[RMDB]
RNA sequence: GGGAACGACUCGAGUAGAGUCGAAAAAUCAUGAGAUAAGGAAAGAAAGCACUUGUAAAAAGCACUGUAACCACGCCAGUACCCUGUCCCAAGAGGGUGAGGUGGUAGCGUAAAACCAUGCGGAAAACGCAUGGCACCUAUUCGUAGGUGCCAUGCGAAAAGAAACAACAACAACAAC
Reactivity to 2A3 in 0.01 (KOAc 150mM, MgCl2 10mM, bicine 150mM(pH8.5), 24C), signal-to-noise 2, nucleotides 027 to 126: a010u110c030a070u070g090a000g030a220u070a130a050g090g020a030a060a000g090a120a030a120g040c010a090c080u130u020g090u090a090a170a000a000a000g070c080a080c050u020g030u170a080a050c010c050a020c000g080c000c000a050g000u070a070c010c000c010u040g000u120c000c000c000a000a060g230a020g080g000g000u050g000a050g000g060u040g050g050u000a020g020c030g010u030a020a020a020a020c040c000a000u060g070c030g000g000a100a140a000a000
Reactivity to DMS in 0.01 (KOAc 150mM, MgCl2 10mM, bicine 150mM(pH8.5), 24C), signal-to-noise 2, nucleotides 027 to 126: a010u030c020a060u000g000a120g000a130u010a030a050g010g000a160a030a160g010a090a040a180g000c010a030c030u000u000g050u030a010a170a040a190a070g000c050a010c020u080g010u020a040a050c140c050a010c060g000c030c080a060g000u030a010c000c010c000u000g000u010c000c040c010a160a080g000a010g000g040g020u000g000a140g000g000u000g000g000u000a010g040c090g060u000a000a010a030a100c170c070a010u010g000c000g030g050a130a200a150a060